Source: RMDB library OK2TRN, as collected in RNAgym. An RNA of 177 nucleotides, treated with DMS and 2A3 and read out base by base. For DMS, 926 sequencing reads were counted. For 2A3, 3,247 sequencing reads were counted. Values cover nucleotides 27 to 126. The reactions ran in a buffer of 150 mM KOAc, 10 mM MgCl2 and 150 mM bicine (pH 8.5), at 24 C.
[RMDB]
RNA sequence: GGGAACGACUCGAGUAGAGUCGAAAAGACACGACGGAGACGUCGUGUCAAGUCCAGUGCGAAAGCACUGGACAAAUAAGGGCUGCCUUUCUCGCUGACUUUCAGCCCCAAACAAAGAAUGUCAGCACCAUGCCUGAUGAUUCGUCAUCAGGCAUGGAAAAGAAACAACAACAACAAC
Reactivity to DMS in 0.01 (KOAc 150mM, MgCl2 10mM, bicine 150mM(pH8.5), 24C), signal-to-noise 1, nucleotides 027 to 126: g000a060c000a010c010g030a020c000g010g000a170g000a300c000g050u000c000g040u000g000u000c000a010a100g000u010c000c000a010g010u000g000c000g000a070a050a140g000c010a010c000u000g010g010a040c000a000a040a040u000a100a130g000g010g010c000u000g020c200c100u030u000u020c070u000c100g000c050u000g000a020c000u000u000u010c010a050g000c000c000c030c150a010a050a110c100a020a020a010g020a050a010u020g020u000c010a000g030c000a300
Reactivity to 2A3 in 0.01 (KOAc 150mM, MgCl2 10mM, bicine 150mM(pH8.5), 24C), signal-to-noise 1, nucleotides 027 to 126: g000a000c000a000c000g010a010c010g000g030a060g000a080c000g010u000c000g010u010g000u010c000a000a000g000u000c000c010a000g000u000g010c000g110a150a000a020g020c010a000c000u000g000g010a010c010a000a010a010u080a040a060g020g000g000c000u020g030c000c070u020u070u020c080u030c040g000c000u000g010a000c000u030u030u020c020a000g030c010c020c040c070a040a060a010c030a040a040a000g040a030a010u100g010u000c000a000g000c000a020